RNA sequence: GGGAACGACUCGAGUAGAGUCGAAAAUUACUCAUCAGUAAGCAGAAGAUGGAGAAUGUUGGUAGAAUGUGUGCAUAUCAAGAAGGAAAACAAAAAUAGUUUUGUUUUGUGCAGAGUUUACACUGCUCUGAUAGCACAAAAUACAUAUGCAUUUACAGCUGAGUGCAUUAUUCGUAAUGCACUCAGCAAAAGAAACAACAACAACAAC
Reactivity to DMS in 0.01 (KOAc 150mM, MgCl2 10mM, bicine 150mM(pH8.5), 24C), signal-to-noise 1, nucleotides 027 to 156: u000u000a110c040u000c080a090u000c110a210g000u000a120a140g000c000a130g030a100a050g000a070u030g030g010a080g030a190a080u000g000u000u010g030g000u000a080g000a150a090u000g020u030g010u000g020c040a030u000a010u010c030a010a120g010a090a130g060g010a030a070a030a140c020a030a080a010a100a290u000a220g030u010u000u000u020g020u000u000u000u010g050u000g000c050a060g040a040g020u000u040u010a110c200a070c090u000g020c030u000c040u010g000a130u000a120g000c030a030c000a000a010a030a070u000a090c090a050u000a030u000g000c010a050u000u000u010a010c000a250
Reactivity to 2A3 in 0.01 (KOAc 150mM, MgCl2 10mM, bicine 150mM(pH8.5), 24C), signal-to-noise 3, nucleotides 027 to 156: u030u010a040c020u000c040a080u040c020a020g090u140a130a020g070c100a010g040a170a000g030a030u080g090g050a040g020a070a110u090g000u030u020g020g040u090a060g080a130a110u080g030u000g030u040g030c000a000u040a000u070c040a030a040g030a070a060g280g030a040a160a010a020c050a030a160a050a020a060u090a080g030u030u030u000u150g010u020u010u000u020g010u010g020c010a000g000a010g020u010u010u070a110c120a040c040u070g010c000u000c010u020g120a140u090a040g030c000a000c000a000a000a000a020u050a000c020a000u010a000u030g010c000a000u040u110u190a020c050a020